[RMDB]
RNA sequence: GGGAACGACUCGAGUAGAGUCGAAAAAUCGUCGAUGGCUUGAAAGAGGACCUGAGACAUUACGCCGACCAACCGUCCUUCAGUGACUUCCGAGUGGAGUUCAAACGAUGAGCGAAUACUACGGGUCCUCAGAUAAAUAGUUCGCUAUUUAUCUGAGAAAAGAAACAACAACAACAAC
Reactivity to DMS in 0.01 (KOAc 150mM, MgCl2 10mM, bicine 150mM(pH8.5), 24C), signal-to-noise 9, nucleotides 027 to 126: a040u010c080g020u010c030g010a200u010g010g010c020u000u010g000a100a090a120g000a010g000g000a020c010c000u000g010a290g000a080c070a060u010u020a070c100g010c040c020g010a070c040c070a090a100c130c020g010u010c030c040u010u020c070a080g010u030g020a040c020u000u010c010c000g010a130g010u030g000g010a090g000u010u010c040a060a120a080c130g010a070u010g000a070g010c020g000a140a100u030a030c030u010a100c030g000g000g000u000c020
Reactivity to 2A3 in 0.01 (KOAc 150mM, MgCl2 10mM, bicine 150mM(pH8.5), 24C), signal-to-noise 9, nucleotides 027 to 126: a000u080c050g020u010c010g020a060u070g020g030c030u060u100g120a100a090a040g100a050g030g050a090c000c010u030g010a030g010a020c000a000u030u040a050c080g040c020c020g030a040c000c030a070a020c030c020g080u100c020c000u060u080c030a070g010u020g090a020c000u050u010c020c020g090a060g040u260g020g030a040g010u050u060c040a080a080a080c070g080a100u080g020a020g020c010g020a060a040u050a070c030u050a100c020g020g000g000u010c000

Overview: An RNA of 177 nucleotides, treated with DMS and 2A3 and read out base by base. Conditions: 150 mM KOAc, 10 mM MgCl2 and 150 mM bicine (pH 8.5), 24 C. For DMS, 36,843 sequencing reads were counted. For DMS the reverse transcriptase was MarathonRT. High DMS reactivity at an A or C suggests that its Watson-Crick edge is free.